RNA sequence: GGGAACGACUCGAGUAGAGUCGAAAAUCAUGGCUCGGAUCGAUCCAUGCGUACAUAGUAUGGUACUCGGUACACUAGCAGUACAGUCGUGCUAGAGUGAUCGUCUAGCUAGGACUAGGAUCGCUGCCUUCCAGGAGGGUUUCGACCCUCCUGGAAGAAAAGAAACAACAACAACAAC
Reactivity to DMS in 0.01 (KOAc 150mM, MgCl2 10mM, bicine 150mM(pH8.5), 24C), signal-to-noise 2, nucleotides 027 to 126: u010c090a140u000g010g010c010u000c020g010g000a170u000c010g020a030u000c000c000a060u010g020c080g010u020a110c280a120u020a100g020u010a040u000g000g000u010a050c180u000c000g010g000u000a020c030a080c040u000a030g000c030a050g000u000a040c110a070g000u020c020g010u000g000c010u000a010g000a010g010u010g010a010u000c070g010u020c000u000a030g010c010u020a160g010g020a120c020u010a070g000g000a030u000c070g000c020u010g000c050
Reactivity to 2A3 in 0.01 (KOAc 150mM, MgCl2 10mM, bicine 150mM(pH8.5), 24C), signal-to-noise 1, nucleotides 027 to 126: u140c050a100u150g040g000c020u040c100g120g000a120u070c000g010a030u130c010c000a010u030g020c020g030u090a100c000a130u120a010g020u010a040u060g020g000u080a110c020u000c030g000g030u040a010c040a000c000u010a010g020c000a000g010u020a010c040a050g100u080c020g050u010g030c010u000a000g000a020g020u010g030a100u040c040g100u000c200u000a000g000c060u180a130g100g050a130c000u020a030g030g050a030u030c030g010c000u010g000c000